[RMDB]
RNA sequence: GGGAACGACUCGAGUAGAGUCGAAAAGAGAACAUGGGAAUCUCGGUUCGCUGACGACCGCCCGGACCUUUCAGCAGGAGAUCGGUCAGGAUGUUCUGCCGAUCGAGCUCGAAUUGAUCGGCGGUCGAAUUUUACCGUGAUUCGUCACGGUAAAAUUAAAAGAAACAACAACAACAAC
Reactivity to 2A3 in 0.01 (KOAc 150mM, MgCl2 10mM, bicine 150mM(pH8.5), 24C), signal-to-noise 9, nucleotides 027 to 126: g050a000g010a040a040c090a200u300g060g040g090a110a120u030c010u010c050g000g030u050u040c100g020c150u060g050a040c020g000a000c000c010g080c050c040c020g050g080a100c010c010u000u010u010c010a010g000c010a020g050g240a130g040a030u010c010g010g160u250c040a020g050g020a110u250g120u290u080c000u000g000c000c000g000a000u000c000g000a010g000c010u060c110g010a030a030u020u020g070a140u060c010g000g000c000g000g000u000c000g000
Reactivity to DMS in 0.01 (KOAc 150mM, MgCl2 10mM, bicine 150mM(pH8.5), 24C), signal-to-noise 9, nucleotides 027 to 126: g000a050g000a060a070c090a170u030g010g020g010a120a080u010c010u000c020g010g010u000u000c070g020c050u000g000a280c010g010a010c010c000g010c070c020c070g020g010a040c010c010u000u000u000c000a030g000c000a110g020g020a230g000a010u000c000g000g000u050c030a020g010g000a190u050g010u040u040c010u000g000c000c000g000a000u000c000g000a300g020c000u000c150g020a020a010u000u010g010a080u010c030g000g000c010g000g000u000c000g010